The data come from the RNA Mapping Database (RMDB), library OK2TRN. Structure probing data (DMS) for a 177-nucleotide construct.
[RMDB]
RNA sequence: GGGAACGACUCGAGUAGAGUCGAAAAUGUGGCCACCAGGAGCCUGCCGUCCGCCCUGUGGUAUGUCCUGCAGCUCUCGACACCUCACAACCUCCAGCGGGCCUUGCCCACCCCAUGGGAAGGGGCAAGCACCCUGUCUUUUCGAAGACAGGGUGCUAAAAGAAACAACAACAACAAC
Reactivity to DMS in 0.01 (KOAc 150mM, MgCl2 10mM, bicine 150mM(pH8.5), 24C), signal-to-noise 1, nucleotides 027 to 126: u000g000u000g000g000c050c030a130c110c050a120g000g000a110g010c040c040u000g060c010c060g020u020c000c050g020c040c040c060u000g030u000g010g000u000a030u000g030u020c050c060u010g000c100a070g000c060u000c050u010c030g010a110c070a070c050c000u000c040a110c050a030a150c060c020u000c050c030a070g020c140g000g010g000c050c060u000u000g070c000c010c000a100c010c000c000c100a100u030g000g000g030a060a130g000g000g000g000c070a080
The reactions ran in a buffer of 150 mM KOAc, 10 mM MgCl2 and 150 mM bicine (pH 8.5), at 24 C.